[RMDB]
RNA sequence: GGGAACGACUCGAGUAGAGUCGAAAAGAUAUGGAGGACUUUGAUCUACGAACACGAGGAUCUCGGAAACGAGGGAGUGUGAGUAGGGAGUCCUCCUAAGUCAAAGGCUAAUCUUCGGAUUAGCCAAGAAGGUAAUAGACUUCGGUCUAUUACCUUCAAAAGAAACAACAACAACAAC
Reactivity to 2A3 in 0.01 (KOAc 150mM, MgCl2 10mM, bicine 150mM(pH8.5), 24C), signal-to-noise 3, nucleotides 027 to 126: g010a020u070a050u170g010g000a000g010g000a010c020u220u190u130g110a100u140c010u000a010c010g030a050a000c000a000c010g110a240g050g000a010u000c010u010c010g020g020a070a060a050c020g000a000g000g020g000a020g000u010g000u010g010a030g000u000a000g010g000g010a010g000u000c000c000u000c000c000u000a020a000g020u000c020a060a070a040g010g010c000u000a010a010u000c010u020u130c300g030g000a010u010u000a000g000c040c000a000a010
Reactivity to DMS in 0.01 (KOAc 150mM, MgCl2 10mM, bicine 150mM(pH8.5), 24C), signal-to-noise 4, nucleotides 027 to 126: g010a060u000a300u000g000g000a000g020g000a020c000u010u000u010g000a090u010c010u000a010c000g000a300a030c010a010c000g000a080g010g010a050u000c000u000c000g000g010a100a100a140c010g000a020g000g000g000a030g030u000g010u000g000a260g000u000a010g000g000g000a010g020u000c010c000u000c000c000u000a000a050g000u000c040a110a140a120g000g010c000u000a010a000u000c000u000u000c190g010g000a000u000u000a010g010c000c000a020a010